[RMDB]
RNA sequence: GGGAACGACUCGAGUAGAGUCGAAAAAAAUCAUCAGCAAAAUGUCCGCUAUUCAGGCCGCUAAUAUCCUUAAGCGCAAACGAGCCGACGACAAGGUCGUAGAAUCUAAACGUCCACGCAUCGAUGAUAAUAUGGAUAUUGUUGACGAAAUAUAUGCCACACAGCGAAAUUUCGAUUUCGCUGUGUGAAAAGAAACAACAACAACAAC
Reactivity to 2A3 in 0.01 (KOAc 150mM, MgCl2 10mM, bicine 150mM(pH8.5), 24C), signal-to-noise 2, nucleotides 027 to 156: a000a000a070u010c020a000u000c010a000g040c020a140a120a050a030u100g040u010c030c010g010c010u000a080u160u010c060a020g030g030c020c000g000c080u060a070a090u110a200u280c040c040u100u070a100a000g040c010g000c060a130a030a030c010g030a030g000c060c000g010a060c020g030a050c040a070a010g000g000u010c010g050u100a070g030a080a020u020c040u100a120a090a030c020g000u000c000c010a030c050g030c030a090u040c060g050a080u090g020a000u070a060a060u170a060u160g060g000a010u020a030u090u040g030u080u030g000a000c000g040a050a000a000u120a000u010a020u090g050c040
Reactivity to DMS in 0.01 (KOAc 150mM, MgCl2 10mM, bicine 150mM(pH8.5), 24C), signal-to-noise 2, nucleotides 027 to 156: a030a060a050u010c000a010u000c020a110g070c020a060a070a050a130u000g010u000c010c020g010c060u010a100u000u000c070a110g030g020c020c010g030c030u010a030a120u020a130u000c050c040u000u000a090a110g000c040g000c030a100a130a060c040g000a110g030c010c010g010a120c040g030a030c070a060a130g110g010u000c020g060u000a030g000a100a020u010c040u000a040a130a130c140g000u000c010c000a060c050g040c050a040u000c050g050a110u020g010a040u000a050a150u010a050u000g020g010a050u000a070u000u000g020u000u000g030a070c080g010a040a090a080u020a140u030a060u020g000c080